Structure probing data (DMS and 2A3) for a 177-nucleotide construct. For 2A3 the reverse transcriptase was SuperScript II with manganese. For DMS, 17,729 sequencing reads were counted. Values cover nucleotides 27 to 126. The RNA was probed in 150 mM KOAc, 10 mM MgCl2 and 150 mM bicine (pH 8.5) at 24 C.
[RMDB]
RNA sequence: GGGAACGACUCGAGUAGAGUCGAAAAAUGGCCUACUUUCCAGGGGUAGGGAACACAACGGGGUCAGGGAGGACGGCAGGGCACACCCCUCAUGCCCGGCAGUGGCUGUCCCUGUCCUCCAGACGUCACUUCAUUAUUUGUUCGCAAAUAAUGAAGUAAAAGAAACAACAACAACAAC
Reactivity to DMS in 0.01 (KOAc 150mM, MgCl2 10mM, bicine 150mM(pH8.5), 24C), signal-to-noise 9, nucleotides 027 to 126: a100u010g010g010c010c010u000a040c050u000u000u000c050c110a120g010g000g000g010u000a030g010g010g010a090a070c140a060c130a090a150c180g000g000g000g010u000c020a050g010g000g020a300g000g010a040c050g010g010c030a040g010g000g000c030a040c080a130c050c010c010c010u010c050a300u010g010c010c010c010g000g020c050a060g010u000g010g020c060u000g010u000c010c000c000u010g010u000c010c000u010c010c060a070g000a130c160g000u010c110
Reactivity to 2A3 in 0.01 (KOAc 150mM, MgCl2 10mM, bicine 150mM(pH8.5), 24C), signal-to-noise 5, nucleotides 027 to 126: a000u100g060g070c000c010u020a020c010u100u090u080c100c070a060g000g010g030g070u020a020g050g020g040a090a030c070a010c020a110a110c090g000g000g010g000u020c010a020g030g010g000a020g030g010a010c010g030g010c030a020g030g000g000c020a010c010a060c020c010c020c000u030c020a020u050g010c000c000c000g010g010c020a030g050u100g120g070c030u090g160u140c000c020c010u010g000u020c000c000u020c000c010a040g040a060c050g070u090c020